[RMDB]
RNA sequence: GGGAACGACUCGAGUAGAGUCGAAAAGGCACAUCAUGUCUUUCGUGGCUGGUGUGACCGCGCAAGGUGCGCGCGGUACGUAUCGAGCAGCGCUCAACUCUGAAAAACAUCAAGACCAUGUGUCUCUAGGUAGUUAUUUGUUCGCAAAUAACUACCUAAAAGAAACAACAACAACAAC
Reactivity to 2A3 in 0.01 (KOAc 150mM, MgCl2 10mM, bicine 150mM(pH8.5), 24C), signal-to-noise 5, nucleotides 027 to 126: g010g020c010a050c010a150u170c010a050u150g000u000c000u040u100u060c100g020u060g020g000c010u010g000g000u020g010u020g030a010c000c010g000c000g000c010a070a120g290g080u180g090c080g000c000g000c000g030g000u010a050c040g020u020a050u160c060g020a000g050c100a050g070c070g060c140u010c030a000a080c040u040c040u110g030a060a040a010a020a030c010a020u030c030a090a050g080a210c000c010a010u050g040u030g030u020c010u030c010u020
Reactivity to DMS in 0.01 (KOAc 150mM, MgCl2 10mM, bicine 150mM(pH8.5), 24C), signal-to-noise 3, nucleotides 027 to 126: g010g020c010a040c170a090u000c170a170u020g010u010c010u000u000u000c050g040u020g010g010c020u000g000g030u000g010u000g020a040c000c010g010c000g000c010a140a160g020g040u010g030c160g010c000g030c020g000g000u000a020c080g000u000a060u010c190g010a080g010c030a140g010c160g010c030u000c000a070a090c130u000c030u000g010a070a040a030a050a020c000a030u000c040a060a100g010a150c020c050a020u000g000u020g010u000c000u000c070u000